[RMDB]
RNA sequence: GGGAACGACUCGAGUAGAGUCGAAAACAUAAACGCUUCGGCGUUUAUGAAAUAAAAUCAGCGGUAAGCUCGCGUAAAAUAUUACCGCUGAACGCGAGCAUAAAACGGGACAGUUCGCUGUCCCGAACAUUCCAGUAACGUUCGCGUUACUGGAAUGAAAAGAAACAACAACAACAAC
Reactivity to 2A3 in 0.01 (KOAc 150mM, MgCl2 10mM, bicine 150mM(pH8.5), 24C), signal-to-noise 4, nucleotides 027 to 126: c000a000u000a000a010a000c000g020c010u050u050c230g140g000c000g010u000u000u000a000u000g000a000a010a000u170a000a060a010a090u120c050a010g000c010g090g040u100a150a030g010c010u000c020g020c010g010u020a040a090a110a180u180a070u120u120a040c000c000g020c040u010g020a000a000c010g010c010g020a020g000c030a040u160a070a090a010a040c020g000g010g000a000c000a010g000u030u040c130g030c090u000g000u000c000c000c000g000a000a000
Reactivity to DMS in 0.01 (KOAc 150mM, MgCl2 10mM, bicine 150mM(pH8.5), 24C), signal-to-noise 3, nucleotides 027 to 126: c010a000u000a000a010a020c000g030c000u000u020c280g060g030c010g010u000u000u000a010u010g010a110a080a090u020a060a050a100a100u030c050a090g010c030g020g000u010a070a060g000c040u000c050g040c040g000u000a050a050a100a130u000a070u010u010a130c030c000g030c010u000g000a010a020c020g020c010g000a020g020c020a150u000a010a040a060a110c030g030g010g020a020c000a000g030u000u000c240g020c000u010g010u000c000c010c040g010a020a030